[RMDB]
RNA sequence: GGGAACGACUCGAGUAGAGUCGAAAAUCUUGCAGGUUCGCCUGCAAGAAAAUAGUAACUUGUAAAGGGGCAGUCCCCUAGCCCCACUCAAAAGGGGGAUAAAAAGAGCGGUCUUCGGACCGCUCAACAUUAUAGCUUCCUUCGGGAAGCUAUAAUGAAAAGAAACAACAACAACAAC
Reactivity to DMS in 0.01 (KOAc 150mM, MgCl2 10mM, bicine 150mM(pH8.5), 24C), signal-to-noise 1, nucleotides 027 to 126: u010c000u000u000g020c000a000g000g020u000u010c210g000c000c000u000g000c030a010a020g010a000a040a080a120u000a110g020u010a190a140c150u020u020g060u010a080a100a190g000g020g000g000c000a150g000u000c000c000c000c020u000a110g000c000c000c000c020a150c050u000c090a080a010a040a100g040g020g020g000g010a100u020a020a070a060a090a030g000a000g020c000g010g000u000c000u000u050c190g000g000a010c000c000g000c020u000c010a000a060
Reactivity to 2A3 in 0.01 (KOAc 150mM, MgCl2 10mM, bicine 150mM(pH8.5), 24C), signal-to-noise 2, nucleotides 027 to 126: u030c010u000u000g030c000a010g000g040u020u080c120g090c040c000u010g000c010a010a000g000a000a000a000a000u050a000g130u010a110a190c130u120u230g120u300a150a230a210g000g000g000g020c000a040g150u040c000c000c010c000u000a000g010c000c000c000c000a000c000u050c000a000a020a000a020g020g010g020g000g010a010u100a030a130a020a010a000g000a000g050c020g000g020u000c000u030u100c250g090g020a000c000c020g010c000u000c000a000a000